This 177-nucleotide RNA was probed chemically with 2A3 and DMS. It was measured as part of the RMDB libraries RFM100 and RFMREP. Conditions: 150 mM KOAc, 10 mM MgCl2 and 150 mM bicine (pH 8.5), 24 C. The 2A3 profile rests on 2,312 reads. 2A3 adducts were read by reverse transcription with SuperScript II with manganese.
[RMDB]
RNA sequence: GGGAACGACUCGAGUAGAGUCGAAAACUAAUAGAUACCACAAAAGGUGUUAGUUCAUUAAGACAGCAGGACGGUGGCCAUGGAAGUCGGCAUCCGCUAAGGAGUGUGUAACAACUCACCUGCCAAAAACACAAAUUCUGUUCGCAGAAUUUGUGUUAAAAGAAACAACAACAACAAC
Reactivity to 2A3 in 0.01 (KOAc 150mM, MgCl2 10mM, bicine 150mM(pH8.5), 24C), signal-to-noise 2, nucleotides 027 to 126: c000u010a030a090u050a100g140a090u160a060c000c000a070c170a110a130a040a020g000g000u020g010u040u030a050g010u040u090c060a040u110u170a070a020g070a110c050a010g000c000a000g000g010a000c000g000g030u020g120g020c010c000a010u030g030g010a030a020g010u020c020g000g000c000a000u000c010c000g000c010u010a020a000g010g000a000g000u000g000u000g000u010a020a000c000a010a000c000u000c020a010c000c000u020g000c000c020a020a050a000
Reactivity to DMS in 0.01 (KOAc 150mM, MgCl2 10mM, bicine 150mM(pH8.5), 24C), signal-to-noise 5, nucleotides 027 to 126: c040u000a070a070u030a140g000a100u010a040c020c020a100c160a080a100a130a090g000g010u000g020u000u000a030g010u010u000c090a090u020u030a090a070g010a120c300a150g000c000a010g000g000a030c010g000g020u000g010g000c010c010a050u010g010g010a120a190g010u010c100g010g000c020a050u000c000c000g000c020u010a020a020g010g000a090g010u000g000u020g000u000a060a120c170a090a000c010u000c000a010c000c010u000g000c000c060a030a060a050